[RMDB]
RNA sequence: GGGAACGACUCGAGUAGAGUCGAAAAGAUAUGGAGCUUGCGAUAGGCAUGGUCGAUCGAUAAGCCUGGGUCGGAAACGACCCAAGGCUUUUGACGAUUCAACAUGCCUAUCGCAAGCUCCUAAGUCGUACUAAUCAGUGUUCGCACUGAUUAGUACAAAAGAAACAACAACAACAAC
Reactivity to DMS in 0.01 (KOAc 150mM, MgCl2 10mM, bicine 150mM(pH8.5), 24C), signal-to-noise 2, nucleotides 027 to 126: g000a090u000a300u000g010g000a000g020c000u000u000g000c000g000a000u000a020g010g000c010a010u000g020g010u010c300g010a050u000c000g020a130u010a030a010g020c000c010u010g000g000g000u000c010g000g010a150a120a220c000g030a010c000c000c000a010a010g000g030c000u000u000u020u000g010a220c140g020a050u000u000c110a220a150c010a000u000g000c010c010u020a000u000c000g030c000a010a000g010c000u010c000c000u000a000a050g010u000c120
Structure probing data (DMS) for a 177-nucleotide construct. For DMS, 2,186 sequencing reads were counted. The data come from the RNA Mapping Database (RMDB), library TTRINS.